[RMDB]
RNA sequence: GGGAACGACUCGAGUAGAGUCGAAAAGUACUACCGUUCGCGGUAGUACAAAUAAUCCAGCCUGGAAAGGCUGGAGCCAAAACUAUGGUAAAGGCACCAUAGAAAGAGCAGAGUUCGCUCUGCUCAACCUACCCUUGUGGUUCGCCACAAGGGUAGGAAAAGAAACAACAACAACAAC
Reactivity to DMS in 0.01 (KOAc 150mM, MgCl2 10mM, bicine 150mM(pH8.5), 24C), signal-to-noise 2, nucleotides 027 to 126: g000u000a000c010u000a010c010c010g030u000u000c240g020c000g010g010u000a000g010u000a010c000a020a070a060u000a130a150u010c000c000a000g000c010c010u000g010g050a160a130a010g030g020c020u000g000g000a010g000c030c060a080a080a130a240c030u000a020u010g040g000u000a070a170a110g000g000c110a040c000c030a000u000a000g010a050a110a050g000a020g000c000a030g040a030g030u000u010c190g000c000u000c010u010g000c010u000c000a040a050
Reactivity to 2A3 in 0.01 (KOAc 150mM, MgCl2 10mM, bicine 150mM(pH8.5), 24C), signal-to-noise 2, nucleotides 027 to 126: g020u010a000c010u000a000c010c010g010u040u070c240g000c000g100g030u000a000g000u000a000c000a000a010a010u050a000a010u000c000c000a000g000c000c010u030g060g150a140a130a020g000g010c010u000g000g000a000g020c000c000a040a100a050a070c010u000a000u010g000g000u100a080a140a200g250g010c070a010c010c000a020u010a000g100a090a140a010g000a000g000c010a000g020a000g030u100u120c150g040c060u000c010u010g000c000u000c000a000a020
Chemical mapping of a 177-nucleotide RNA with DMS and 2A3.
Source: RMDB library M2PK50, as collected in RNAgym.
For 2A3, 3,100 sequencing reads were counted.
As a SHAPE reagent, 2A3 marks flexible, mostly unpaired nucleotides at the ribose 2'-OH.
Values cover nucleotides 27 to 126.
DMS adducts were read by reverse transcription with MarathonRT.
The reactions ran in a buffer of 150 mM KOAc, 10 mM MgCl2 and 150 mM bicine (pH 8.5), at 24 C.
For DMS, 1,262 sequencing reads were counted.